[RMDB]
RNA sequence: GGGAACGACUCGAGUAGAGUCGAAAAGAUAUGGAUCAGGUUAGCAUCGAUCGUAAUGGGUCGGAAACGACCUUACGGGAGCUAACUGAUCCUAAGUCAAACUUGUGUUUGUUCGCAAACACAAGAAGUAAUUGCAAUGGUUCGCCAUUGCAAUUACAAAAGAAACAACAACAACAAC
Reactivity to DMS in 0.01 (KOAc 150mM, MgCl2 10mM, bicine 150mM(pH8.5), 24C), signal-to-noise 3, nucleotides 027 to 126: g000a010u000a030u010g010g000a010u000c000a000g010g000u000u010a000g010c000a300u000c230g000a040u000c000g010u010a010a140u020g000g000g010u000c000g020g000a010a000a020c010g010a010c000c000u000u000a000c000g010g000g000a030g020c000u000a020a070c010u000g000a010u000c000c010u000a000a050g000u000c000a170a120a240c010u000u000g010u000g010u000u000u000g000u000u010c270g020c000a000a000a010c000a010c010a000a020g000a090a100
Reactivity to 2A3 in 0.01 (KOAc 150mM, MgCl2 10mM, bicine 150mM(pH8.5), 24C), signal-to-noise 3, nucleotides 027 to 126: g000a010u020a010u060g010g010a010u010c010a010g180g270u060u050a010g000c020a050u300c120g080a040u010c000g010u020a090a090u190g150g030g010u000c010g010g000a000a000a010c000g000a000c010c000u000u000a000c000g030g030g000a040g000c000u010a000a030c000u000g010a000u000c000c000u000a000a000g000u000c010a060a110a170c020u000u010g010u000g020u010u000u000g070u030u070c300g000c200a000a000a000c000a000c000a010a000g010a030a010